[RMDB]
RNA sequence: GGGAACGACUCGAGUAGAGUCGAAAAGCGCCGACGGGACAGCUGAGCUUACAACCACUGCAGCCACACGUUUUAUGAAGGACUUGCAUUUCACCGGGACAAAUGGUGUUGGUGAGGUAGGUCGUGGCACUUUGCUAGUAUUCGUACUAGCAAAGUGAAAAGAAACAACAACAACAAC
Reactivity to DMS in 0.01 (KOAc 150mM, MgCl2 10mM, bicine 150mM(pH8.5), 24C), signal-to-noise 6, nucleotides 027 to 126: g010c080g020c040c030g020a080c100g010g010g000a070c070a080g010c050u000g010a130g010c060u000u000a070c120a100a080c050c040a090c070u010g000c060a120g000c010c020a070c060a120c100g010u000u000u000u000a100u020g030a150a110g010g010a060c020u000u000g010c030a060u010u010u010c020a030c010c010g010g000g000a030c050a080a100a110u010g020g020u000g010u000u000g000g010u000g000a040g010g000u000a020g010g000u000c010g010u000g010g010
Reactivity to 2A3 in 0.01 (KOAc 150mM, MgCl2 10mM, bicine 150mM(pH8.5), 24C), signal-to-noise 6, nucleotides 027 to 126: g030c050g000c010c010g030a030c030g000g020g040a010c020a020g000c050u050g030a010g010c030u090u080a050c020a040a020c020c020a030c040u060g020c040a020g020c020c010a020c000a010c030g020u040u010u040u090a200u160g130a100a050g150g000a020c010u010u020g010c010a110u130u110u070c020a010c000c020g030g040g020a030c040a020a300a140u290g180g040u190g180u170u030g010g010u020g010a030g010g000u020a010g030g000u000c040g020u060g050g000
Conditions: 150 mM KOAc, 10 mM MgCl2 and 150 mM bicine (pH 8.5), 24 C. Structure probing data (DMS and 2A3) for a 177-nucleotide construct. High DMS reactivity at an A or C suggests that its Watson-Crick edge is free. For 2A3, 7,561 sequencing reads were counted. The data come from the RNA Mapping Database (RMDB), library OK2TRN.